The record gives the reactivity of an RNA of 177 nucleotides to 2A3 and DMS. The reactions ran in a buffer of 150 mM KOAc, 10 mM MgCl2 and 150 mM bicine (pH 8.5), at 24 C. The DMS profile rests on 1,116 reads. Source: RMDB library RFMREP, as collected in RNAgym. For 2A3, 1,310 sequencing reads were counted.
RNA sequence: GGGAACGACUCGAGUAGAGUCGAAAAGUGCAAUGAUGUAUUUUAUUCAACACAUCAUUCUGAAAGAACGUGUGGAAAACUAAUGACUGAGCACAAAAAGCAGACGAGAACUUCGGUUCUCGUCUGCCGUAGAGCUCAUGUUCGCAUGAGCUCUACGAAAAGAAACAACAACAACAAC
Reactivity to 2A3 in 0.01 (KOAc 150mM, MgCl2 10mM, bicine 150mM(pH8.5), 24C), signal-to-noise 2, nucleotides 027 to 126: g000u010g040c030a080a200u090g020a030u090g020u050a070u030u110u040u040a140u070u100c070a080a040c010a020c000a060u050c010a020u110u030c010u100g210a200a160a040g000a050a020c050g020u020g000u030g030g050a100a080a040a070c040u070a110a040u040g120a120c030u050g000a000g000c000a000c000a040a110a060a010a020g010c000a010g020a000c020g040a010g000a000a000c030u080u210c300g060g030u000u000c000u000c000g000u000c010u000g000c000
Reactivity to DMS in 0.01 (KOAc 150mM, MgCl2 10mM, bicine 150mM(pH8.5), 24C), signal-to-noise 2, nucleotides 027 to 126: g010u000g010c040a060a130u010g000a180u000g000u000a050u030u000u000u000a110u000u030c120a020a100c020a010c000a020u010c110a150u000u000c040u000g000a110a100a090g020a030a020c300g010u010g000u000g000g000a080a050a070a100c170u000a010a050u000g040a050c030u000g000a260g000c030a020c050a060a050a080a100a130g000c000a000g000a010c010g000a020g010a070a040c000u000u010c180g030g000u010u000c000u000c010g000u000c000u000g020c000